[RMDB]
RNA sequence: GGGAACGACUCGAGUAGAGUCGAAAAAAACUUUUGUGACUUGCUGAAACGGGACUUAUCUCCUCACCGAGGCUAAGCAAGUAAAAUACGCCUCUCAUAUCCUUACCUGAGGGUGGUAAGGAAAUAACCUGCAACGCUUCCUUCGGGAAGCGUUGAAGUCGCAUAUUAACUUCGGUUAAUAUGCGACAAAAGAAACAACAACAACAAC
Reactivity to 2A3 in 0.01 (KOAc 150mM, MgCl2 10mM, bicine 150mM(pH8.5), 24C), signal-to-noise 2, nucleotides 027 to 156: a000a010a010c170u180u130u080u120g080u060g030a030c010u000u020g020c020u050g010a040a040a090c060g000g000g020a010c040u130u080a050u140c090u020c030c000u030c010a050c030c100g020a020g020g050c040u040a010a010g010c020a020a040g070u110a010a020a000a000u070a020c040g010c010c000u000c000u010c030a030u020a040u190c000c000u010u000a010c000c000u060g040a090g000g030g050u060g010g000u000a000a000g000g000a010a010a010u010a010a020c020c050u070g020c000a000a000c000g000c000u000u000c000c010u030u010c030g090g000g000a000a000g020c010g000u000u000g000a000a000
This 207-nucleotide RNA was probed chemically with 2A3. Values cover nucleotides 27 to 156. Conditions: 150 mM KOAc, 10 mM MgCl2 and 150 mM bicine (pH 8.5), 24 C. The data come from the RNA Mapping Database (RMDB), library M2RFPK.